This 207-nucleotide RNA was probed chemically with 2A3 and DMS. Conditions: 150 mM KOAc, 10 mM MgCl2 and 150 mM bicine (pH 8.5), 24 C. It was measured as part of the RMDB library M2RFPK.
RNA sequence: GGGAACGACUCGAGUAGAGUCGAAAAGAUUCCUCGUUGUUGAGCGAGGUUUAAACAAAUCGACCACACAAACGUAGAGCCGACUACGGAUUUAUAAAUUAAGGCAUUAAGUGUGCUAAGGAGACAAAAAACGAUGUUGUGUUCGCACAACAUCGAAUCUAAGCCAAGUGUUCGCACUUGGCUUAGAAAAAGAAACAACAACAACAAC
Reactivity to 2A3 in 0.01 (KOAc 150mM, MgCl2 10mM, bicine 150mM(pH8.5), 24C), signal-to-noise 2, nucleotides 027 to 156: g070a140u110u120c000c020u010c000g010u000u040g000u000u000g010a000g010c000g030a020g000g020u000u030u120a030a030a030c120a000a020a000u000c000g000a000c000c000a010c040a010c020a040a130a000c000g010u000a000g010a000g020c000c000g040a010c010u000a000c000g020g010a010u050u290u000a140u100a060a020a010u130u200a010a010g000g020c000a010u050u160a100a100g010u000g000u000g000c000u000a100a060g190g020a050g050a010c180a010a130a000a050a050a010c010g000a000u000g020u010u010g020u000g000u040u080c190g080c050a000c020a000a000c000a000u010c000g010a000a000
Reactivity to DMS in 0.01 (KOAc 150mM, MgCl2 10mM, bicine 150mM(pH8.5), 24C), signal-to-noise 1, nucleotides 027 to 156: g000a260u000u010c000c000u030c010g030u000u000g070u000u000g000a180g050c020g000a060g030g000u000u000u000a020a110a110c040a000a050a110u010c000g010a060c040c080a170c080a300c010a120a150a110c020g080u000a030g010a110g030c080c000g000a080c020u000a060c000g010g010a190u010u000u000a100u000a050a070a090u000u000a040a120g030g000c000a260u000u010a090a070g040u000g030u000g000c040u000a090a100g010g000a300g000a140c080a010a070a070a040a150a220c000g030a020u000g020u020u010g030u000g020u050u000c300g070c000a000c000a000a030c000a000u000c000g000a000a050